RNA sequence: GGGAACGACUCGAGUAGAGUCGAAAAUAAGCCAAAGGGAUGUCCCGACCGGAGGCCGACAAUCCAGGGAACCGGAUGUCAUCACGUUGUUGCAGUACCAGAUGACAUCUUAAAUCCGAUCUGCAAAAAAAGUCUUACACCUUCGGGUGUAAGACAACCUUAGUUAUACGUUCGCGUAUAACUAAGGAAAAGAAACAACAACAACAAC
Reactivity to DMS in 0.01 (KOAc 150mM, MgCl2 10mM, bicine 150mM(pH8.5), 24C), signal-to-noise 2, nucleotides 027 to 156: u000a080a060g010c010c020a070a300a210g020g000g010a060u000g010u000c010c040c010g000a110c000c040g010g000a300g020g010c020c030g000a120c100a100a110u000c070c050a060g000g020g020a140a060c070c100g000g000a030u000g000u000c010a020u000c010a300c170g000u000u000g030u020u000g000c000a080g040u000a120c070c030a100g000a020u000g000a010c010a020u000c010u000u000a050a130a130u000c040c010g040a090u000c020u010g010c040a000a000a050a110a130a070a120g000u000c000u000u000a000c000a000c010c010u000u000c280g070g010g000u000g000u000a000a010g010a020c000a010a010
Reactivity to 2A3 in 0.01 (KOAc 150mM, MgCl2 10mM, bicine 150mM(pH8.5), 24C), signal-to-noise 2, nucleotides 027 to 156: u090a030a010g000c000c000a010a000a000g000g000g010a020u030g010u010c000c000c000g000a000c010c010g020g000a010g000g000c000c000g030a040c060a130a090u110c110c130a040g000g000g010a010a010c030c030g000g000a000u000g000u000c000a000u010c010a010c140g070u090u080g110u100u030g020c020a020g000u080a040c060c050a060g000a010u000g000a000c000a000u000c000u010u010a010a030a030u100c080c010g040a090u050c010u000g000c000a000a000a000a030a000a030a120g000u010c000u000u000a000c000a000c000c000u030u100c200g140g000g010u000g000u010a000a000g000a000c000a000a000

Structure probing data (DMS and 2A3) for a 207-nucleotide construct.
The DMS profile rests on 3,066 reads.
For 2A3 the reverse transcriptase was SuperScript II with manganese.
Values cover nucleotides 27 to 156.